RNA sequence: GGGAACGACUCGAGUAGAGUCGAAAAUUGUCAUGUUUCGACAUGACAAACAUAAGAUCUAGAGAAAAACGGCCAAAAAGUCUAGAUCAAAUAAAGGCCGAAGACUAGGUUAGUUCGCUAACCUAAAAAGUUUGUCAUGAUUCGUCAUGACAAACUUAAAAGAAACAACAACAACAAC
Reactivity to DMS in 0.01 (KOAc 150mM, MgCl2 10mM, bicine 150mM(pH8.5), 24C), signal-to-noise 1, nucleotides 027 to 126: u000u000g000u010c000a000u000g030u000u000u030c200g060a050c000a010u000g000a000c000a000a020a050c070a060u000a100a090g030a030u000c000u000a010g000a040g000a110a060a010a180a110c090g000g020c020c020a050a020a210a100a070g010u000c000u000a020g000a000u000c020a060a060a070u030a050a050a060g010g000c010c000g000a090a090g010a130c230u000a030g000g000u000u000a000g010u000u010c230g020c010u000a010a000c000c000u000a000a020a020